[RMDB]
The record gives the reactivity of an RNA of 177 nucleotides to 2A3. The RNA was probed in 150 mM KOAc, 10 mM MgCl2 and 150 mM bicine (pH 8.5) at 24 C.
RNA sequence: GGGAACGACUCGAGUAGAGUCGAAAAGAAAGAAAGAAAGUCACCUGGAUAGCUUGUUAAAAUGCAGAUUCCACUUCAGUGGGCCUGGGAUUCUGCAUUUCUAACAAGUUCCCAGGUGUUGCGAAAAAGGAUCAACGUACUUCGGUACGUUGAUCCUAAAAGAAACAACAACAACAAC
Reactivity to 2A3 in 0.01 (KOAc 150mM, MgCl2 10mM, bicine 150mM(pH8.5), 24C), signal-to-noise 1, nucleotides 027 to 126: g020a030a030a000g170a050a110a000g050a000a060a010g040u010c000a000c010c000u020g000g010a020u090a030g020c020u000u000g000u020u020a000a000a040a040u000g000c000a010g000a000u050u000c010c010a090c070u220u140c110a250g030u100g060g030g030c020c070u070g020g040g020a020u170u050c000u000g010c000a000u000u000u000c000u000a000a000c000a000a000g000u030u020c000c000c000a000g000g000u000g000u030u010g020c010g010a080a100a020a000